RNA sequence: GGGAACGACUCGAGUAGAGUCGAAAACGCAGUUUACCUUCGUAAAAAUCCGUUGCGAUCUCGUGGCAACCACGGUCAUGUGAAGUGCAGAUGGCGUGUGUUGCCUUCAGCAUGGCAGCAUCUGCAAGGUACUGACCUACUUCGGUAGGUCAGUACCAAAAGAAACAACAACAACAAC
Reactivity to 2A3 in 0.01 (KOAc 150mM, MgCl2 10mM, bicine 150mM(pH8.5), 24C), signal-to-noise 3, nucleotides 027 to 126: c070g020c030a030g000u050u080u100a090c020c000u120u110c070g050u090a080a010a000a060a040u060c080c050g000u020u010g030c050g020a070u010c040u050c090g060u060g000g000c000a040a010c000c000a010c020g140g050u090c060a050u040g020u040g280a220a120g120u100g100c040a020g050a160u040g040g000c010g000u040g020u030g010u000u010g000c000c000u000u020c000a000g010c010a010u030g060g000c000a010g010c000a060u010c000u030g000c010a020a100